[RMDB]
RNA sequence: GGGAACGACUCGAGUAGAGUCGAAAAUGUAGCUCAUUUGGGUAGAGCACUCGUUUUUGGAACGAAUGGUAGCCGGUUCAAAUCCGGUCAACUCAUCCUUGAAAGAUGAAAAAACGCAAAGACUGGCCGAUUUUUGAAGUUUCGACUUCAAAAAUCGAAAAGAAACAACAACAACAAC
Reactivity to DMS in 0.01 (KOAc 150mM, MgCl2 10mM, bicine 150mM(pH8.5), 24C), signal-to-noise 1, nucleotides 027 to 126: u010g050u000a060g000c020u000c030a040u010u000u010g090g000g010u000a100g000a030g000c140a240c020u000c050g020u070u080u000u030u060g000g000a050a050c000g000a050a020u000g010g000u000a200g000c000c050g000g000u060u000c150a170a300a280u000c000c140g000g000u000c050a000a040c020u020c000a100u000c000c030u030u150g000a150a120a110g000a000u000g060a000a000a000a060a050a190c140g100c100a010a050a140g010a030c070u100g000g010c250
Reactivity to 2A3 in 0.01 (KOAc 150mM, MgCl2 10mM, bicine 150mM(pH8.5), 24C), signal-to-noise 2, nucleotides 027 to 126: u120g000u050a020g020c020u020c050a140u050u090u140g110g030g020u080a030g060a010g060c040a030c000u030c020g020u000u050u010u070u100g120g120a050a040c040g000a090a000u090g120g000u040a000g000c000c000g050g030u030u100c080a030a000a000u000c000c000g000g050u070c000a010a010c000u010c000a020u020c010c010u010u150g150a120a060a050g010a000u090g010a000a000a000a090a090a000c090g020c050a080a040a000g060a050c050u060g010g010c000